This 207-nucleotide RNA was probed chemically with 2A3.
RNA sequence: GGGAACGACUCGAGUAGAGUCGAAAAAGAGCCGGAUACGUCCGGCUCAACGGUGGAUACGUGUGGUGCCGUCCGCUCCCCCUAUGGCAUAACAAAUGCACCACACACUAGGCUACGGCCUAGUGAAAAAAGGUGUAUGUGUUCGCACAUACACCAACCACAUGCUUGAGUUCGCUCAAGCAUGUGGAAAAGAAACAACAACAACAAC
Reactivity to 2A3 in 0.01 (KOAc 150mM, MgCl2 10mM, bicine 150mM(pH8.5), 24C), signal-to-noise 1, nucleotides 027 to 156: a000g000a010g000c010c000g030g000a010u030a020c230g020u000c000c000g020g000c000u000c000a000a000c020g000g010u030g000g040a040u010a130c000g020u010g000u000g080g000u000g000c000c010g020u030c000c030g050c040u060c000c100c000c080c000u160a260u260g080g000c060a130u160a210a160c060a070a080a000u100g000c000a010c020c000a000c000a000c000a000c000u000a000g000g000c000u010a010c120g000g010c000c000u000a000g000u000g000a180a000a000a000a000a010g000g000u000g000u000a000u000g000u010g020u030u060c210g030c010a000c000a000u000a000c000a000c000c000a010a000
Background
The reactions ran in a buffer of 150 mM KOAc, 10 mM MgCl2 and 150 mM bicine (pH 8.5), at 24 C. For 2A3 the reverse transcriptase was SuperScript II with manganese.